[RMDB]
RNA sequence: GGGAACGACUCGAGUAGAGUCGAAAAGAUAUGGAGUAGGGCACGACAUGUCGUGACGCUUCGGAAACGAAGUACACGACAACAGCGUGCCUACUCCUAAGUCAAAAGGUGUGCUUCGGCACACCAAUCUCAGAUGACACUUCGGUGUCAUCUGAGAAAAAGAAACAACAACAACAAC
Reactivity to 2A3 in 0.01 (KOAc 150mM, MgCl2 10mM, bicine 150mM(pH8.5), 24C), signal-to-noise 1, nucleotides 027 to 126: g000a030u070a020u080g020g030a020g010u040a090g090g230g020c020a040c000g130a100c040a220u300g020u010c000g020u000g000a110c300g000c040u030u000c010g010g040a040a020a020c000g010a000a010g020u000a040c010a010c000g010a000c000a110a050c060a070g040c000g020u010g020c000c000u010a000c000u000c000c000u000a000a020g050u000c000a110a010a050a060g000g020u000g010u010g000c000u040u160c300g150g040c000a000c000a000c010c000a010a000
Reactivity to DMS in 0.01 (KOAc 150mM, MgCl2 10mM, bicine 150mM(pH8.5), 24C), signal-to-noise 1, nucleotides 027 to 126: g050a030u020a300u020g000g000a100g040u000a050g010g000g010c000a030c000g020a130c190a300u010g010u000c030g040u000g020a130c170g030c000u010u000c040g010g000a030a100a290c000g000a000a050g030u000a090c000a020c000g050a020c000a000a040c240a250g020c000g000u010g000c000c000u000a000c000u000c000c040u000a030a140g030u020c030a100a100a180a190g030g000u000g010u000g010c000u000u000c140g000g030c010a000c000a030c000c000a000a030

Overview:
The record gives the reactivity of an RNA of 177 nucleotides to 2A3 and DMS. For 2A3 the reverse transcriptase was SuperScript II with manganese. For 2A3, 1,979 sequencing reads were counted. For DMS the reverse transcriptase was MarathonRT. The data come from the RNA Mapping Database (RMDB), library TTRDES. The RNA was probed in 150 mM KOAc, 10 mM MgCl2 and 150 mM bicine (pH 8.5) at 24 C.